[RMDB]
RNA sequence: GGGAACGACUCGAGUAGAGUCGAAAAUUCAUGCUAUCUUGUAAUUGGAAUGAUUGUUUUACUUGUGCAUGAUUUCGUAACACACAUUGGUCACUUGGAAAAUAUUGAUUGACUAGGUUAUAGAGAUUUUUCCAUAUAUUGAUAUAUAUCAAAACAAUCGAAAAUACGCAUUCGUGCGUAUUUUCGAAAAAGAAACAACAACAACAAC
Reactivity to 2A3 in 0.01 (KOAc 150mM, MgCl2 10mM, bicine 150mM(pH8.5), 24C), signal-to-noise 1, nucleotides 027 to 156: u030u030c000a000u000g010c000u040a280u300c010u020u000g010u040a010a010u090u040g260g170a210a070u200g130a190u060u240g070u000u080u010u020a040c000u000u000g000u010g000c000a010u000g010a020u000u090u000c040g050u080a000a000c050a040c080a000c030a220u050u020g050g000u070c030a030c030u000u060g000g000a160a060a080a080u220a130u020u170g060a040u040u100g020a030c010u080a000g010g010u000u060a030u000a140g010a040g000a100u070u000u020u000u000c010c000a030u120a030u070a060u290u110g000a000u010a000u030a030u080a030u060c040a000a030a000a130c060a000a050